[RMDB]
RNA sequence: GGGAACGACUCGAGUAGAGUCGAAAACCCAAAGCGUUCGCGCUUUGGGAAAGAAUAAACCAGCGAAAAGAAUGAUGUGGACGCUCGUAAAAACCACAUCAAAAAGUCAACGGUUCGCCGUUGACAACUUAACCCACAAGUUCGCUUGUGGGUUAAGAAAAGAAACAACAACAACAAC
Reactivity to 2A3 in 0.01 (KOAc 150mM, MgCl2 10mM, bicine 150mM(pH8.5), 24C), signal-to-noise 2, nucleotides 027 to 126: c000c000c000a000a010a010g000c010g010u030u090c170g010c010g010c120u000u000u000g000g000g030a060a140a000g070a030a080u120a140a090a010c010c000a010g010c030g030a070a050a050a110g120a120a240u140g000a000u000g010u000g010g020a020c030g030c090u140c190g270u250a010a040a020a000a070c010c000a000c000a010u000c000a000a040a010a000a000g000u010c000a010a000c000g000g030u030u020c170g040c050c000g000u000u000g000a000c010a000a000
Reactivity to DMS in 0.01 (KOAc 150mM, MgCl2 10mM, bicine 150mM(pH8.5), 24C), signal-to-noise 2, nucleotides 027 to 126: c010c000c020a000a010a010g010c000g010u010u000c240g050c010g010c000u010u010u010g010g000g000a000a050a060g010a140a150u010a050a070a180c010c010a050g020c010g020a050a110a090a050g000a070a150u000g000a020u000g020u000g000g000a300c040g000c030u000c290g020u020a060a050a050a080a100c000c000a010c020a010u000c020a030a040a080a060a090g000u000c000a030a010c000g000g000u000u010c190g030c000c000g000u010u010g010a000c000a030a120
Overview: Source: RMDB library M2PK50, as collected in RNAgym. An RNA of 177 nucleotides, treated with 2A3 and DMS and read out base by base. The RNA was probed in 150 mM KOAc, 10 mM MgCl2 and 150 mM bicine (pH 8.5) at 24 C. For DMS the reverse transcriptase was MarathonRT.